[RMDB]
The data come from the RNA Mapping Database (RMDB), library OK2TRN. The record gives the reactivity of an RNA of 177 nucleotides to 2A3 and DMS. For 2A3, 704 sequencing reads were counted.
RNA sequence: GGGAACGACUCGAGUAGAGUCGAAAAAUUAAUGGAGUGAUCAGUAAGAGAUUAUUUGCCCAGAUGGGUUUCCAGAAGAACCUUUGCUUUUCUCUAAUGGACAUCAAUCCUUGGCUCAACAGACUGAGAUUAGUAGAUGCUUCGGCAUCUACUAAUCAAAAGAAACAACAACAACAAC
Reactivity to 2A3 in 0.01 (KOAc 150mM, MgCl2 10mM, bicine 150mM(pH8.5), 24C), signal-to-noise 1, nucleotides 027 to 126: a000u090u080a020a060u100g040g000a050g070u010g020a010u020c040a000g070u090a150a000g030a010g000a070u050u080a050u110u230u200g040c060c000c030a040g070a160u100g010g000g000u080u110u040c020c050a040g070a120a020g000a090a060c030c000u050u080u060g020c000u200u000u080u000c030u000c020u030a100a040u070g020g020a030c000a070u030c040a000a050u040c050c000u030u030g100g050c030u030c050a020a100c010a050g080a120c050u080g000a050
Reactivity to DMS in 0.01 (KOAc 150mM, MgCl2 10mM, bicine 150mM(pH8.5), 24C), signal-to-noise 1, nucleotides 027 to 126: a060u040u020a080a080u010g010g020a090g030u010g020a040u000c020a120g010u010a110a050g010a100g000a030u000u010a050u000u000u000g030c020c080c070a100g000a110u030g000g000g000u020u000u000c030c030a070g020a160a150g000a050a020c080c060u000u000u000g010c080u000u000u000u000c040u010c020u000a060a130u010g000g020a040c080a040u010c070a060a050u000c010c020u020u010g000g010c030u000c060a070a090c130a030g010a110c090u010g000a260

About this RNA
Values are in units of 0.01, from 0 to 300, in steps of 10. The DMS profile rests on 976 reads.